Overview:
This 177-nucleotide RNA was probed chemically with DMS and 2A3. For 2A3, 3,692 sequencing reads were counted. It was measured as part of the RMDB library RFM100.

[RMDB]
RNA sequence: GGGAACGACUCGAGUAGAGUCGAAAAAGACGGCCCGCACAUCCAAGGACGGCAGCAGGCGCGGAACUUGCCCAAUGCGCGGCGCGCGAGGCAGCGACGGGGAGCGCGCGAGCGAGGCGGGCCCACAAGAAGACAGUACUUUCGAGUACUGUCUUCUAAAAGAAACAACAACAACAAC
Reactivity to DMS in 0.01 (KOAc 150mM, MgCl2 10mM, bicine 150mM(pH8.5), 24C), signal-to-noise 3, nucleotides 027 to 126: a070g030a160c160g000g020c020c010c020g010c010a070c100a070u030c070c020a160a160g020g010a150c040g020g030c030a120g020c050a080g000g000c070g010c030g000g000a060a090c040u000u000g000c030c000c030a080a160u060g000c010g020c010g000g000c020g020c040g000c000g000a090g020g010c060a080g000c030g000a070c100g020g010g010g000a140g000c020g020c010g000c010g010a130g040c060g000a200g000g010c090g000g000g000c000c020c070a030c060a070
Reactivity to 2A3 in 0.01 (KOAc 150mM, MgCl2 10mM, bicine 150mM(pH8.5), 24C), signal-to-noise 3, nucleotides 027 to 126: a010g080a040c040g010g000c000c010c000g000c010a110c020a070u040c030c030a050a040g100g020a060c060g040g050c030a030g020c010a020g130g000c030g000c020g090g030a070a060c020u030u180g050c000c010c000a010a040u190g000c010g020c010g060g010c030g010c000g000c030g030a090g170g010c060a080g020c050g070a060c060g020g010g010g030a040g020c020g000c000g010c000g010a020g020c030g010a020g000g030c000g000g020g000c000c000c010a070c010a020

High 2A3 reactivity points to a flexible backbone, as in loops and unpaired stretches.
The reactions ran in a buffer of 150 mM KOAc, 10 mM MgCl2 and 150 mM bicine (pH 8.5), at 24 C.
2A3 adducts were read by reverse transcription with SuperScript II with manganese.